[RMDB]
RNA sequence: GGGAACGACUCGAGUAGAGUCGAAAAUUACCCACGGGAACUGCUGGGUUCCCCUGAUGUCCAGUCCCUCCCCGCUCCUGGAGAAGGGAGACUCGGGAACGCCUAGCAUCUGAGGGACGAAGCCGCCACACGACUCCGUUCGCGGAGUCGAAAAGAAACAACAACAACAAC
Reactivity to DMS in 0.01 (KOAc 150mM, MgCl2 10mM, bicine 150mM(pH8.5), 24C), signal-to-noise 3, nucleotides 027 to 129: u060u050a150c020c000c000a180c290g020g000g040a120a050c070u020g040c000u030g000g020g010u030u020c040c060c000c040u070g030a070u070g060u000c030c110a120g010u000c000c030c000u030c030c010c010c070g020c040u020c040c020u030g040g000a160g020a140a150g070g040g000a030g010a040c070u000c060g000g020g000a110a050c200g060c110c020u000a040g030c040a100u040c060u030g020a070g000g000g000a090c090g000a090a150g010c000c050g010c000c060a060c100a070
Reactivity to 2A3 in 0.01 (KOAc 150mM, MgCl2 10mM, bicine 150mM(pH8.5), 24C), signal-to-noise 4, nucleotides 027 to 129: u110u040a180c000c000c000a000c000g020g000g000a050a040c010u080g010c000u060g050g020g070u030u030c000c000c000c000u050g100a050u140g110u040c040c010a040g030u000c000c000c000u020c040c000c010c030g010c020u080c010c050u090g070g100a130g050a150a110g040g010g000a000g020a010c020u020c020g010g000g000a010a020c050g070c030c000u020a000g000c000a010u030c020u010g040a060g020g000g020a010c030g000a020a000g030c000c000g040c000c000a080c010a020

Chemical mapping of a 170-nucleotide RNA with DMS and 2A3.
The RNA was probed in 150 mM KOAc, 10 mM MgCl2 and 150 mM bicine (pH 8.5) at 24 C.
It was measured as part of the RMDB library 15KLIB.
The 2A3 profile rests on 8,131 reads.
For DMS the reverse transcriptase was MarathonRT.